[RMDB]
RNA sequence: GGGAACGACUCGAGUAGAGUCGAAAAGUAAUAGAUACUUGGAUGACGAGAAAGGGUGCGCUGAUAUCCAAGACGAAUGCUAGCAGUAAAUAGAAUAGCGCUCCUAAUACAACUAGCAACAAAAGGAUAAGGUAUCGUGAUGUCAAUCACAUUGCGAUCAUAGGUACUCAUUCGUGAGUACCUAUGAAAAAGAAACAACAACAACAAC
Reactivity to 2A3 in 0.01 (KOAc 150mM, MgCl2 10mM, bicine 150mM(pH8.5), 24C), signal-to-noise 5, nucleotides 027 to 156: g020u030a020a100u050a150g090a090u080a130c000u010u000g020g010a030u040g060a040c100g030a030g070a130a060a040g060g000g010u030g010c020g000c010u040g030a050u030a010u110c020c010a020a010g050a020c080g060a110a060u080g020c010u020a010g000c050a020g070u160a050a090a110u110a060g100a070a060u030a030g020c010g000c000u010c000c000u020a050a040u070a050c020a070a030c020u020a000g010c010a020a070c030a050a120a000a010g050g010a080u070a090a040g070g050u070a020u040c010g010u010g010a000u010g030u040c050a060a060u080c000a060c000a020u000u020g010c000g010a000
Reactivity to DMS in 0.01 (KOAc 150mM, MgCl2 10mM, bicine 150mM(pH8.5), 24C), signal-to-noise 3, nucleotides 027 to 156: g030u010a120a110u010a110g010a170u010a060c000u000u000g010g020a140u010g010a210c060g000a140g000a100a070a130g010g020g020u000g010c020g000c000u010g000a160u000a070u000c020c010a070a080g020a160c080g020a100a110u000g030c000u000a010g010c010a110g010u000a040a120a150u000a130g010a050a130u010a100g030c040g050c010u000c020c000u000a040a110u010a080c010a080a080c010u030a020g030c020a060a170c060a030a060a060a140g000g010a050u000a070a140g010g020u000a040u000c010g050u000g010a020u010g020u000c040a080a150u020c140a110c010a050u000u000g000c000g000a080